An RNA of 177 nucleotides, treated with 2A3 and DMS and read out base by base.
RNA sequence: GGGAACGACUCGAGUAGAGUCGAAAAGAAGGGAAAGGAGAGCCAUGGACAGUCUCCAGAGGUUCCUAAGGCCUCGGUCGCGCCUGCCGGGAGGCAGAAUGUCCCGGUUGUCCAUGUAAGAAGAAGACACCGAUGGCUAUUUCGAUAGCCAUCGGUGAAAAGAAACAACAACAACAAC
Reactivity to 2A3 in 0.01 (KOAc 150mM, MgCl2 10mM, bicine 150mM(pH8.5), 24C), signal-to-noise 2, nucleotides 027 to 126: g070a020a000g080g000g000a070a050a080g050g000a030g000a000g000c030c010a000u000g000g000a000c000a010g200u030c100u020c190c050a020g010a010g030g010u140u250c040c130u190a110a070g050g000c000c030u020c010g000g030u110c070g010c030g000c090c000u020g020c030c000g010g020g020a000g000g000c020a010g140a130a090u190g030u010c000c000c000g000g000u000u020g000u000c000c020a000u010g070u050a090a040g060a050a010g010a040a020g000a030
Reactivity to DMS in 0.01 (KOAc 150mM, MgCl2 10mM, bicine 150mM(pH8.5), 24C), signal-to-noise 2, nucleotides 027 to 126: g000a110a040g040g030g030a070a100a100g010g000a020g000a050g020c080c020a000u000g000g000a020c000a130g020u010c070u020c040c030a030g070a030g000g000u000u000c080c000u020a100a190g000g000c000c020u010c150g000g040u020c090g000c300g000c030c000u000g020c010c030g020g020g010a020g000g010c030a110g000a120a020u060g040u020c020c000c020g010g000u000u000g000u000c000c000a000u000g030u050a120a160g000a130a120g000a110a090g010a190

The reactions ran in a buffer of 150 mM KOAc, 10 mM MgCl2 and 150 mM bicine (pH 8.5), at 24 C.
Reactivities are given for positions 27 through 126.